[RMDB]
The record gives the reactivity of an RNA of 177 nucleotides to 2A3 and DMS. 2A3 adducts were read by reverse transcription with SuperScript II with manganese. The RNA was probed in 150 mM KOAc, 10 mM MgCl2 and 150 mM bicine (pH 8.5) at 24 C.

RNA sequence: GGGAACGACUCGAGUAGAGUCGAAAAAGUAGUUACCUCUCAGCCCCUCCACCUUGGGGUGCCCUAGUCGGACAAUGCAGUUCCGAUGGAAAGGCUAAGCACCUCGCAAUGAGGUAAGGUGGGACUUAUGUCCCUAAAGGUUCGCCUUUAGGGACAUAAAAGAAACAACAACAACAAC
Reactivity to 2A3 in 0.01 (KOAc 150mM, MgCl2 10mM, bicine 150mM(pH8.5), 24C), signal-to-noise 1, nucleotides 027 to 126: a000g110u140a000g070u070u150a100c020c010u040c000u020c050a040g020c000c000c000c000u040c020c030a050c000c000u010u010g020g000g000g020u070g010c000c000c010u010a020g030u000c000g030g000a050c030a070a230u300g060c050a080g060u230u010c000c010g030a000u010g010g050a080a010a000g010g000c000u020a010a000g070c020a040c030c000u010c000g050c120a120a200u300g000a000g000g040u000a000a000g000g010u000g000g010g000a000c010u050u020
Reactivity to DMS in 0.01 (KOAc 150mM, MgCl2 10mM, bicine 150mM(pH8.5), 24C), signal-to-noise 2, nucleotides 027 to 126: a100g010u030a090g020u040u010a050c030c010u000c050u000c090a190g000c000c020c000c020u000c030c010a050c000c000u010u030g020g010g020g030u010g020c000c000c020u000a140g000u000c000g030g030a030c050a170a150u010g010c250a140g000u020u020c000c000g000a000u000g000g000a080a050a070g020g020c140u010a040a150g090c170a020c000c020u000c000g000c210a050a040u000g000a010g000g010u000a010a000g020g070u000g000g010g000a050c130u000u000